[RMDB]
RNA sequence: GGGAACGACUCGAGUAGAGUCGAAAAGGAGGCAAGUUCGCUUGCCUCCAAAGAAGCUCAAAUUGACGCUAACAUCCGCGUCAUCGCGAGCAAGCGAGGAAAAAACCGUGAACUUCGGUUCACGGAACUAUGACAGUAGCUUCGGCUACUGUCAUAGAAAAGAAACAACAACAACAAC
Reactivity to DMS in 0.01 (KOAc 150mM, MgCl2 10mM, bicine 150mM(pH8.5), 24C), signal-to-noise 3, nucleotides 027 to 126: g000g020a000g000g020c010a000a020g030u010u000c150g020c000u000u000g000c000c000u000c000c000a020a030a110g010a080a090g020c000u000c000a060a300a020u000u000g010a000c000g000c000u010a120a120c240a140u000c300c240g000c020g010u000c000a000u000c120g010c300g000a010g020c010a070a050g000c050g000a090g050g000a020a070a070a050a140a020c000c020g020u000g000a000a000c000u020u030c180g020g000u000u000c000a000c000g000g000a010a020
Reactivity to 2A3 in 0.01 (KOAc 150mM, MgCl2 10mM, bicine 150mM(pH8.5), 24C), signal-to-noise 1, nucleotides 027 to 126: g030g000a000g000g000c000a030a000g030u030u020c110g060c110u000u000g000c010c010u000c010c000a000a000a010g000a030a010g000c000u020c000a000a000a090u070u030g010a000c000g020c010u070a210a050c060a270u120c080c090g000c000g000u000c000a000u020c000g020c050g060a000g020c000a000a010g110c030g060a080g090g080a060a070a020a020a040a030c010c000g000u000g000a010a000c000u030u080c180g060g000u000u010c000a010c020g000g000a000a000
An RNA of 177 nucleotides, treated with DMS and 2A3 and read out base by base. 2A3 is a SHAPE reagent: it acylates the 2'-hydroxyl of flexible nucleotides of all four kinds. 2A3 adducts were read by reverse transcription with SuperScript II with manganese. For DMS the reverse transcriptase was MarathonRT. Reactivities are given for positions 27 through 126.